This 177-nucleotide RNA was probed chemically with 2A3 and DMS. Values cover nucleotides 27 to 126. The 2A3 profile rests on 1,707 reads.
RNA sequence: GGGAACGACUCGAGUAGAGUCGAAAAAAGUGUGGAUAGCGAAAAGAAUAAAAAUGAUUCACAAUCAACUUUAUCCAGUACCGCUUCAAGCACAAGUAAUACUGGCUUAAUUCAGUUAAGAUCAGUCAUUCCCCCUCUAUUUCGAUAGAGGGGGAAUAAAAGAAACAACAACAACAAC
Reactivity to 2A3 in 0.01 (KOAc 150mM, MgCl2 10mM, bicine 150mM(pH8.5), 24C), signal-to-noise 2, nucleotides 027 to 126: a000a000g020u000g000u020g020g020a050u040a040g000c000g050a000a020a050a040g300a030a100u030a030a050a010a000a010u020g010a010u140u100c090a040c080a060a030u040c000a000a020c000u020u010u000a000u000c000c000a050g060u020a020c020c030g000c010u030u010c060a050a010g010c000a000c020a020a010g060u040a070a110u010a180c000u000g000g000c000u030u020a040a030u160u170c060a100g070u020u010a020a010g040a280u100c000a010g020u070c010
Reactivity to DMS in 0.01 (KOAc 150mM, MgCl2 10mM, bicine 150mM(pH8.5), 24C), signal-to-noise 3, nucleotides 027 to 126: a140a110g010u010g010u010g020g000a200u000a020g000c000g000a030a030a140a220g020a020a010u010a010a000a000a100a250u000g000a020u010u000c300a080c300a060a100u000c000a010a070c210u000u000u000a000u000c010c010a050g000u000a140c130c000g040c000u000u000c150a140a180g020c030a030c010a060a080g010u000a080a080u000a040c010u000g010g020c040u000u010a010a020u000u040c290a070g020u000u010a000a050g000a080u000c010a000g000u000c250

For DMS, 2,175 sequencing reads were counted. The RNA was probed in 150 mM KOAc, 10 mM MgCl2 and 150 mM bicine (pH 8.5) at 24 C.